RNA sequence: GGGAACGACUCGAGUAGAGUCGAAAAAACACCUGAGUGGCUGCCGUGUGCCAGCCGUCUGGGGCCCUUGGUGAGAAUGGCAUGGUGGUGCCCAUCAGGGCCUGCCUAGCCCGUGCUCUGGACGGGCUGUCCUCUGAGAAUUCGUUCUCAGAGGACAAAAAGAAACAACAACAACAAC
Reactivity to DMS in 0.01 (KOAc 150mM, MgCl2 10mM, bicine 150mM(pH8.5), 24C), signal-to-noise 3, nucleotides 027 to 126: a070a060c140a110c030c010u000g000a070g020u010g010g010c010u000g000c070c030g030u010g010u010g020c120c040a080g010c000c010g020u010c020u010g000g010g010g010c000c040c050u000u010g010g010u010g010a130g010a120a080u020g000g000c010a130u000g000g030u010g020g010u010g010c020c010c000a080u000c130a080g010g000g020c020c020u010g000c010c000u000a290g010c010c000c080g020u000g000c040u000c100u000g010g000a040c030g020g010g020c050
Reactivity to 2A3 in 0.01 (KOAc 150mM, MgCl2 10mM, bicine 150mM(pH8.5), 24C), signal-to-noise 2, nucleotides 027 to 126: a020a000c070a000c000c030u080g030a020g090u120g100g000c020u040g030c020c000g190u120g040u120g090c020c010a020g110c030c000g000u000c000u000g020g030g030g030c060c000c020u100u160g120g000u090g010a090g120a240a200u160g020g020c020a030u050g100g050u080g060g050u120g090c000c030c000a060u180c040a070g020g000g010c000c000u000g010c000c010u000a040g000c010c010c000g000u030g020c010u040c110u230g050g030a000c000g030g020g000c020